[RMDB]
RNA sequence: GGGAACGACUCGAGUAGAGUCGAAAACCCUACGGGUGGACUGUGGAGAGACAGGGCACUGCUAAGGCCCAAAUCUCAGCCAUGCAUCGAGGGGUACAAUCCGUAUGGCCAACAACUGGCGCGUACGUAAAGUCUCCUUUCUCGAUGGUCCAUACCUCUUCUCGGUAUACUUCGGUAUACCGAGAAGAAAAGAAACAACAACAACAAC
Reactivity to 2A3 in 0.01 (KOAc 150mM, MgCl2 10mM, bicine 150mM(pH8.5), 24C), signal-to-noise 3, nucleotides 027 to 156: c000c000c040u060a040c060g010g010g020u000g000g000a000c000u020g010u040g020g000a010g000a000g000a030c060a130g010g000g010c100a140c300u220g100c130u240a100a080g030g000c010c000c030a090a110a050u020c000u000c000a020g000c010c000a020u050g020c000a000u000c000g000a000g000g010g010g000u030a000c010a010a050u020c040c010g000u000a000u010g010g030c030c000a060a040c040a100a080c300u050g000g000c140g010c000g230u010a000c000g030u030a030a040a040g010u030c090u170c060c000u040u240u060c020u010c020g020a000u010g030g010u000c000c010a000u160a270c010c020u030
The record gives the reactivity of an RNA of 207 nucleotides to 2A3. It was measured as part of the RMDB library PDB130.